The record gives the reactivity of an RNA of 177 nucleotides to 2A3 and DMS.
It was measured as part of the RMDB library OK1LIB.
2A3 adducts were read by reverse transcription with SuperScript II with manganese.
High 2A3 reactivity points to a flexible backbone, as in loops and unpaired stretches.
The 2A3 profile rests on 27,696 reads.

[RMDB]
RNA sequence: GGGAACGACUCGAGUAGAGUCGAAAAAAACAUCAACGAGGUAAAUUUGAUGUAAUAAUCGUGCUAAGUCAUUGUGGCAUUUUCUUCGAUGAAACAUUAUGCCAAGAAUUGCCUGAAAUUGAUGUCAACCUUCUACUAUAUUCGUAUAGUAGAAGGUAAAAGAAACAACAACAACAAC
Reactivity to 2A3 in 0.01 (KOAc 150mM, MgCl2 10mM, bicine 150mM(pH8.5), 24C), signal-to-noise 9, nucleotides 027 to 126: a000a000a000c010a010u010c010a010a020c060g120a050g040g010u110a160a130a140u040u030u040g030a030u050g050u070a060a080u140a070a030u070c050g020u030g030c060u170a150a090g110u220c030a050u070u140g090u070g110g000c030a040u030u030u040u010c070u090u080c100g300a300u180g040a060a020a010c020a020u060u070a010u090g020c010c010a000a010g020a020a030u010u010g010c000c000u030g050a090a090a090u010u020g000a010u010g030u040c020a010
Reactivity to DMS in 0.01 (KOAc 150mM, MgCl2 10mM, bicine 150mM(pH8.5), 24C), signal-to-noise 9, nucleotides 027 to 126: a050a060a010c000a000u000c010a010a010c110g010a080g010g010u010a030a020a030u010u000u000g010a060u010g000u010a060a050u040a100a020u000c030g020u010g010c030u030a060a070g010u020c090a070u020u040g020u020g010g000c020a030u000u010u000u000c070u020u010c160g000a080u030g000a050a050a060c300a040u010u010a040u010g010c070c030a040a060g000a020a030u000u000g000c010c000u010g000a070a090a180u000u000g000a010u000g000u000c130a090